Overview
Structure probing data (2A3 and DMS) for a 207-nucleotide construct. It was measured as part of the RMDB library RNAMAK. The 2A3 profile rests on 580 reads. The RNA was probed in 150 mM KOAc, 10 mM MgCl2 and 150 mM bicine (pH 8.5) at 24 C.
[RMDB]
RNA sequence: GGGAACGACUCGAGUAGAGUCGAAAAGCGCCUUCGGGCGCAUGAAAUCCUAAGUCAUACCGUUUGACGUUAGUGGAGCAUACAACAUUCGGAAACGAAUGAGUAUGCGUUGAAACUAACCGAGGUAUGAUAUGGAAGAAGCUGGAUUCGUCCAGAAUAUGUGAGAAGCUUUCGAGCUUCUCACAUAAAAAGAAACAACAACAACAAC
Reactivity to 2A3 in 0.01 (KOAc 150mM, MgCl2 10mM, bicine 150mM(pH8.5), 24C), signal-to-noise 1, nucleotides 027 to 156: g000c000g010c070c110u030u120c280g260g000g000c010g050c000a010u070g010a000a210a010u020c000c010u030a080a010g010u000c000a000u000a000c000c020g090u090u150u270g230a130c050g000u000u010a010g000u000g010g020a010g000c000a010u080a040c070a270a070c000a100u030u000c010g030g050a050a040a040c010g030a000a000u000g000a010g000u000a000u000g030c030g000u020u020g000a000a000a000c010u010a000a010c010c000g000a010g010g010u000a000u010g000a000u000a020u010g000g000a110a080g040a050a010g050c000u010g060g030a040u130u100c160g020u010c080c060a010g050a060a120
Reactivity to DMS in 0.01 (KOAc 150mM, MgCl2 10mM, bicine 150mM(pH8.5), 24C), signal-to-noise 1, nucleotides 027 to 156: g000c000g000c000c010u000u000c300g010g020g030c000g030c000a000u000g000a140a090a060u000c000c030u000a030a300g060u000c000a020u000a000c000c000g010u030u010u000g000a110c160g020u010u040a010g000u000g000g010a300g050c000a030u030a010c010a060a130c130a010u050u000c000g000g000a090a210a300c000g000a010a010u000g030a300g000u000a000u000g010c000g040u000u000g000a260a190a100c000u000a000a010c030c000g000a100g010g000u000a000u000g000a000u000a060u030g000g000a130a210g030a060a190g000c010u000g000g000a190u000u000c190g030u030c000c010a170g050a170a110